[RMDB]
RNA sequence: GGGAACGACUCGAGUAGAGUCGAAAAUUACAGGCGUGAGCCACCCUGCCUGGCCGAGUCCUGUUCUUUUAUGGGGGAGGUGGUUGUUAGGGAAAUCAUUACUGAGAAUAGGGGGCACAUGAGGUAGAAACGACUCUUAGUUCGCUAAGAGUCGUUUAAAAGAAACAACAACAACAAC
Reactivity to DMS in 0.01 (KOAc 150mM, MgCl2 10mM, bicine 150mM(pH8.5), 24C), signal-to-noise 1, nucleotides 027 to 126: u000u000a080c050a040g000g000c050g000u000g000a120g010c010c000a070c070c070c110u020g020c010c090u000g040g000c000c050g050a180g010u000c020c070u000g020u010u000c000u020u000u010u010a240u000g000g020g010g060g040a120g010g010u000g010g020u000u000g000u000u000a110g000g010g010a150a130a040u000c070a070u010u010a110c140u010g010a110g010a060a150u000a160g000g000g000g000g000c150a020c130a060u010g010a070g030g010u000a060g020

The data come from the RNA Mapping Database (RMDB), library OK2TST. The record gives the reactivity of an RNA of 177 nucleotides to DMS. The RNA was probed in 150 mM KOAc, 10 mM MgCl2 and 150 mM bicine (pH 8.5) at 24 C.